Chemical mapping of a 170-nucleotide RNA with DMS and 2A3. For 2A3 the reverse transcriptase was SuperScript II with manganese. The reactions ran in a buffer of 150 mM KOAc, 10 mM MgCl2 and 150 mM bicine (pH 8.5), at 24 C. For DMS the reverse transcriptase was MarathonRT. 2A3 is a SHAPE reagent: it acylates the 2'-hydroxyl of flexible nucleotides of all four kinds. Reactivities are given for positions 27 through 129.

[RMDB]
RNA sequence: GGGAACGACUCGAGUAGAGUCGAAAAGUCUCAGAUUGUAACUGGCCUUUUUAAAGAUUGCUCUAGAGAAACUUCUGGCCUCUCACCUGCUUAUGCACCAACAUAUGUUAGUGUUGAUGACAAGUAUAACCUCGGAACUUCGGUUCCGAGAAAAGAAACAACAACAACAAC
Reactivity to DMS in 0.01 (KOAc 150mM, MgCl2 10mM, bicine 150mM(pH8.5), 24C), signal-to-noise 4, nucleotides 027 to 129: g000u010c050u000c030a110g000a040u010u010g020u020a000a000c000u030g000g000c090c000u000u000u000u000u000a040a040a130g030a000u070u030g020c060u010c030u030a140g010a190g010a150a140a030c050u080u010c000u000g040g030c070c010u020c060u020c050a030c070c050u040g000c040u040u000a070u040g010c050a040c060c040a050a030c010a040u000a120u040g040u110u000a150g000u020g000u000u000g030a150u030g040a090c010a050a030g050u050a060u050a100a070c300
Reactivity to 2A3 in 0.01 (KOAc 150mM, MgCl2 10mM, bicine 150mM(pH8.5), 24C), signal-to-noise 6, nucleotides 027 to 129: g050u000c050u000c090a050g110a180u120u140g070u150a030a040c010u020g020g030c000c000u090u070u010u030u190a130a150a000g070a130u040u090g010c020u010c010u100a040g010a010g020a130a120a030c000u070u010c010u020g080g000c020c000u010c000u000c000a050c010c010u040g000c000u040u010a040u280g050c020a040c030c000a010a020c000a040u080a020u230g190u110u110a080g010u000g000u020u010g020a060u030g030a020c020a070a010g020u020a060u060a190a060c000